[RMDB]
RNA sequence: GGGAACGACUCGAGUAGAGUCGAAAAGAUAUGGACGAUGUCCAGGGAGAUCUAAUGUCGGAAACGACAUGAUGAUCGACGAUCUGGACCGCUCGUCCUAAGUCAAACCACAUCUUCGGAUGUGGAAUCUAGGUUAACUGUUCGCAGUUAACCUAGAAAAAGAAACAACAACAACAAC
Reactivity to 2A3 in 0.01 (KOAc 150mM, MgCl2 10mM, bicine 150mM(pH8.5), 24C), signal-to-noise 5, nucleotides 027 to 126: g030a010u100a030u170g010g000a000c020g010a020u300g000u000c010c000a000g020g000g000a030g000a000u000c000u030a050a000u020g010u010c000g030g030a080a050a070c030g000a000c020a010u030g030a040u240g000a000u000c010g010a140c000g000a000u000c000u000g000g000a000c000c000g020c020u020c000g000u000c010c000u010a070a020g030u000c020a060a030a150c010c010a000c000a000u000c010u070u100c300g190g000a000u000g010u020g000g000a010a050
Reactivity to DMS in 0.01 (KOAc 150mM, MgCl2 10mM, bicine 150mM(pH8.5), 24C), signal-to-noise 6, nucleotides 027 to 126: g010a050u010a300u000g000g010a010c010g010a030u010g000u000c000c000a020g000g000g010a030g000a010u000c000u000a250a010u000g010u000c000g010g000a100a070a210c000g010a000c000a000u000g000a160u010g000a020u000c000g030a110c300g000a010u000c010u000g000g000a010c010c120g000c060u010c010g000u000c000c000u000a010a080g000u000c040a120a120a280c010c000a000c000a000u000c000u000u010c270g050g000a020u000g030u000g010g010a030a030

This 177-nucleotide RNA was probed chemically with 2A3 and DMS.
For 2A3 the reverse transcriptase was SuperScript II with manganese.
For 2A3, 20,021 sequencing reads were counted.
For DMS, 9,226 sequencing reads were counted.
DMS adducts were read by reverse transcription with MarathonRT.
Source: RMDB library TTRDES, as collected in RNAgym.
Conditions: 150 mM KOAc, 10 mM MgCl2 and 150 mM bicine (pH 8.5), 24 C.